The record gives the reactivity of an RNA of 177 nucleotides to DMS and 2A3.
High DMS reactivity at an A or C suggests that its Watson-Crick edge is free.
[RMDB]
RNA sequence: GGGAACGACUCGAGUAGAGUCGAAAAAUUCUUCAGUAUACUAUGAAAAUGAUCCGCAAUUGAAACGAGAUCUAUGGGUAAUAUUGAAUCAACUACCUUUCGCCUAUACGCAGAAGUCAUAGAUGGGACUCACAAAACAAUUCGUUGUUUUGUGAGUAAAAGAAACAACAACAACAAC
Reactivity to DMS in 0.01 (KOAc 150mM, MgCl2 10mM, bicine 150mM(pH8.5), 24C), signal-to-noise 6, nucleotides 027 to 126: a170u000u000c060u000u000c020a040g020u010a040u010a050c030u000a090u000g010a150a050a090a050u010g010a010u000c010c010g010c070a110a150u010u010g010a110a110a080c020g000a150g000a010u000c010u000a050u000g010g000g000u000a050a050u000a030u000u000g010a050a030u010c110a040a060c090u010a080c100c040u010u000u000c060g010c040c040u000a060u000a070c130g010c060a080g010a060a060g010u000c060a050u010a050g010a110u000g010g000g010
Reactivity to 2A3 in 0.01 (KOAc 150mM, MgCl2 10mM, bicine 150mM(pH8.5), 24C), signal-to-noise 6, nucleotides 027 to 126: a000u100u020c010u040u030c010a000g000u020a020u000a080c040u020a050u180g060a050a070a040a080u070g000a010u000c010c020g000c120a130a240u170u210g100a170a110a040c060g020a060g000a250u000c010u030a030u050g060g000g010u040a130a090u020a090u060u050g030a020a030u080c030a040a060c030u060a090c010c010u010u080u070c040g020c010c010u090a070u020a130c040g020c040a030g050a210a000g050u040c030a030u060a060g090a040u050g040g010g030